Structure probing data (DMS and 2A3) for a 177-nucleotide construct. Values cover nucleotides 27 to 126. The RNA was probed in 150 mM KOAc, 10 mM MgCl2 and 150 mM bicine (pH 8.5) at 24 C. The 2A3 profile rests on 12,402 reads.

RNA sequence: GGGAACGACUCGAGUAGAGUCGAAAAGACGCGCCUCAACACACGCCGCAGGUGCAACCCCUCUGCUCCGCUGUGAAGAUGGUGCGUGGAAUAAGGUGGAGAAGCAAGAGCGAGGGUGUCACGCAGGAUUUAUAGCAGUCUUCGGACUGCUAUAAAUAAAAGAAACAACAACAACAAC
Reactivity to DMS in 0.01 (KOAc 150mM, MgCl2 10mM, bicine 150mM(pH8.5), 24C), signal-to-noise 8, nucleotides 027 to 126: g010a030c040g000c020g000c010c000u000c040a080a280c040a030c040a040c050g010c090c180g010c060a040g000g010u010g000c090a140a120c090c060c020c040u020c000u000g010c000u010c280c090g000c080u010g020u010g010a050a210g000a030u030g010g020u000g000c020g010u000g010g010a050a050u010a090a090g000g010u010g000g010a060g010a080a070g020c100a070a080g000a060g010c060g000a070g000g000g000u010g010u000c060a060c080g000c040a060g000g010
Reactivity to 2A3 in 0.01 (KOAc 150mM, MgCl2 10mM, bicine 150mM(pH8.5), 24C), signal-to-noise 7, nucleotides 027 to 126: g060a000c010g000c000g010c000c000u020c020a050a050c010a010c010a020c060g030c020c020g020c020a010g050g010u070g020c020a040a110c000c010c010c000u040c020u040g020c000u050c060c030g050c090u030g010u020g060a050a050g030a050u200g000g010u010g010c010g000u000g000g020a040a060u150a090a030g070g030u070g030g060a070g010a080a030g030c070a080a040g020a020g090c040g020a060g020g040g010u070g070u100c040a040c050g020c020a020g020g070
Source: RMDB library OK1LIB, as collected in RNAgym.